[RMDB]
RNA sequence: GGGAACGACUCGAGUAGAGUCGAAAACGUGCCUUCGGGCACGACACUAUGUGCCCUUGGACUACAUUGUGGAGGCCAGCACCAUGCAGUCCAUGGGCAUAUACACUAUUACUCAGAUUCGUCUGAGCUAUAGUCAUCCCUUCGGGGAUGACUAUAGAAAAGAAACAACAACAACAAC
Reactivity to DMS in 0.01 (KOAc 150mM, MgCl2 10mM, bicine 150mM(pH8.5), 24C), signal-to-noise 2, nucleotides 027 to 126: c030g030u000g010c010c000u000u020c180g030g000g030c000a010c000g010a130c170a120c140u010a030u010g040u000g020c000c000c000u000u010g020g000a020c000u000a030c000a010u000u020g010u000g010g020a150g010g000c030c000a080g000c020a030c000c090a020u000g010c020a000g020u000c000c010a010u000g000g000g030c010a010u000a000u000a020c230a170c170u000a090u010u030a180c000u000c010a020g020a040u000u000c180g020u020c000u000g000a000g000
Reactivity to 2A3 in 0.01 (KOAc 150mM, MgCl2 10mM, bicine 150mM(pH8.5), 24C), signal-to-noise 2, nucleotides 027 to 126: c010g000u010g000c000c000u040u070c200g010g000g000c000a000c010g000a000c010a020c010u050a030u030g000u010g000c000c010c010u000u020g000g020a000c000u000a010c010a000u010u010g010u020g050g170a110g000g130c020c020a000g060c000a010c000c010a000u020g010c020a010g010u000c000c000a010u000g030g010g000c000a000u000a000u000a000c000a010c000u080a110u250u240a050c000u010c000a010g020a010u000u070c100g040u040c080u010g000a010g000
Chemical mapping of a 177-nucleotide RNA with DMS and 2A3. Reactivities are given for positions 27 through 126. Conditions: 150 mM KOAc, 10 mM MgCl2 and 150 mM bicine (pH 8.5), 24 C. For DMS the reverse transcriptase was MarathonRT. The 2A3 profile rests on 2,733 reads. For 2A3 the reverse transcriptase was SuperScript II with manganese.